[RMDB]
RNA sequence: GGGAACGACUCGAGUAGAGUCGAAAAGCUAGUCGGAGACGACUAGCAACGAUCAGUUCGCUGAUCGGAUCGUGCAUUCUAACACGCUCGAAGCACGUAUAGGCGACGCGGAGCGUGCUACUGUAAAAUCAGGAUACUUAAUUAAUUAGGCGUCGCGCCUACUGCGGGUAUUCGUACCCGCAGUAGGAAAAGAAACAACAACAACAAC
Reactivity to 2A3 in 0.01 (KOAc 150mM, MgCl2 10mM, bicine 150mM(pH8.5), 24C), signal-to-noise 3, nucleotides 027 to 156: g000c000u000a000g000u000c000g030g010a040g010a120c000g000a000c000u000a010g000c000a000a000c000g000a010u000c000a010g020u070u060c160g030c100u010g010a010u000c000g010g050a080u080c010g000u020g000c020a140u040u140c050u090a070a010c000a000c010g010c000u010c010g060a070a020g000c010a010c000g030u020a140u070a100g060g000c010g000a000c020g000c000g010g040a040g000c000g000u000g000c020u040a020c000u000g040u040a020a030a040a160u150c000a000g020g030a060u050a190c070u160u120a060a130u170u090a060a090u070u160a160g060g030c000g000u000c010g000c000g000
Reactivity to DMS in 0.01 (KOAc 150mM, MgCl2 10mM, bicine 150mM(pH8.5), 24C), signal-to-noise 1, nucleotides 027 to 156: g110c030u000a020g040u000c000g020g020a300g000a300c000g040a010c010u010a050g020c020a000a030c040g020a060u000c000a030g050u000u010c220g030c000u000g000a020u030c000g040g000a030u020c060g000u000g010c040a300u030u000c100u000a010a010c020a030c010g000c000u020c000g000a150a210g030c010a010c000g030u000a210u000a080g000g000c000g010a030c000g000c010g010g030a110g000c010g050u000g030c000u000a060c010u000g010u000a140a120a060a130u000c020a100g010g020a120u020a080c140u010u000a120a100u000u010a050a110u000u000a100g000g000c010g010u000c000g040c030g000
Overview
An RNA of 207 nucleotides, treated with 2A3 and DMS and read out base by base. 2A3 adducts were read by reverse transcription with SuperScript II with manganese. For DMS the reverse transcriptase was MarathonRT. The RNA was probed in 150 mM KOAc, 10 mM MgCl2 and 150 mM bicine (pH 8.5) at 24 C.